[RMDB]
RNA sequence: GGGAACGACUCGAGUAGAGUCGAAAAUUUGACGAUUUGCGUUUUCCAAGCAUUUCUCGACAUUGAUGAAAUCCGCGCUAGCCGAUAUAUCACGAAUAUAUUUAGCUUGCGCCGCGACCUUAUCUUGUUGCGAAGUCUGUAGCAAGGUCCAAAUUGCCAUACCAGAUCGUUUCGACGAUCUGGUAUGAAAAGAAACAACAACAACAAC
Reactivity to DMS in 0.01 (KOAc 150mM, MgCl2 10mM, bicine 150mM(pH8.5), 24C), signal-to-noise 3, nucleotides 027 to 156: u000u000u000g010a140c050g020a070u010u000u000g000c010g000u020u000u000u000c060c050a100a300g020c020a040u000u000u000c020u010c050g020a090c060a070u020u000g010a060u010g020a030a060a070u000c020c030g000c020g020c010u000a010g020c020c020g020a030u000a020u000a010u010c070a220c300g010a090a070u000a000u000a010u000u000u010a030g000c000u000u010g000c010g050c060c040g030c090g030a020c020c030u000u020a040u000c000u010u000g010u000u000g050c070g010a010a160g010u030c040u010g000u020a190g020c040a050a030g020g020u020c110c130a000a060a110u000u010g010c050
Reactivity to 2A3 in 0.01 (KOAc 150mM, MgCl2 10mM, bicine 150mM(pH8.5), 24C), signal-to-noise 5, nucleotides 027 to 156: u080u040u080g040a020c040g040a050u010u020u070g020c030g050u090u050u140u000c060c020a070a020g000c030a020u000u030u000c020u000c010g030a030c040a050u060u230g010a020u040g010a070a020a050u010c030c010g000c000g010c010u030a000g000c010c010g010a000u000a000u000a000u000c040a050c300g300a300a000u030a000u020a000u020u050u070a020g000c000u000u010g000c000g020c030c020g030c080g020a010c010c020u030u060a020u030c020u020u030g000u000u010g000c020g010a030a020g040u000c030u060g030u050a030g010c010a020a030g030g010u060c040c030a020a050a070u040u060g020c020
This 207-nucleotide RNA was probed chemically with DMS and 2A3. The 2A3 profile rests on 4,980 reads. Values cover nucleotides 27 to 156. Conditions: 150 mM KOAc, 10 mM MgCl2 and 150 mM bicine (pH 8.5), 24 C. It was measured as part of the RMDB library OK3TST.